[RMDB]
RNA sequence: GGGAACGACUCGAGUAGAGUCGAAAAGGUAGCCGCGAAAGCCGAGUGCCAGUACAUCAACCAGACUUUCGACUGGUUUAUCCUGCGGGAAGCUGUCUUGCCAGAGCGCCCAGGUAUCGGCGCGGGCACUUCGACGCCUUUUCGAAGGCGUCGAAGUAAAAGAAACAACAACAACAAC
Reactivity to DMS in 0.01 (KOAc 150mM, MgCl2 10mM, bicine 150mM(pH8.5), 24C), signal-to-noise 2, nucleotides 027 to 126: g000g000u000a050g020c020c040g000c030g010a110a200a060g000c080c030g080a020g000u000g020c100c000a050g040u000a080c100a000u000c150a040a100c030c000a050g000a100c040u000u040u110c160g000a070c000u000g010g000u000u000u030a090u000c080c000u000g000c140g050g000g000a050a110g080c020u000g010u060c060u000u000g020c090c100a080g010a140g010c020g000c000c020c020a100g020g010u110a080u040c260g000g000c010g080c000g010g020g030c040
Reactivity to 2A3 in 0.01 (KOAc 150mM, MgCl2 10mM, bicine 150mM(pH8.5), 24C), signal-to-noise 2, nucleotides 027 to 126: g030g000u020a020g030c000c000g070c010g070a100a070a010g050c030c030g000a020g040u030g050c000c000a020g100u050a000c000a050u110c060a000a050c040c000a030g120a070c040u150u150u050c100g050a080c000u000g000g040u000u030u030a030u030c000c020u030g020c100g040g000g020a070a070g000c000u000g060u100c000u110u060g040c050c010a010g040a000g060c010g080c000c000c000a000g080g070u100a070u120c000g000g000c010g010c000g010g000g000c000
Annotation: Structure probing data (DMS and 2A3) for a 177-nucleotide construct. The data come from the RNA Mapping Database (RMDB), library RFM100. For DMS the reverse transcriptase was MarathonRT. Reactivities are given for positions 27 through 126. Reactivities are rounded to 0.1 and cut off at 0 and 3. The reactions ran in a buffer of 150 mM KOAc, 10 mM MgCl2 and 150 mM bicine (pH 8.5), at 24 C. For 2A3, 933 sequencing reads were counted.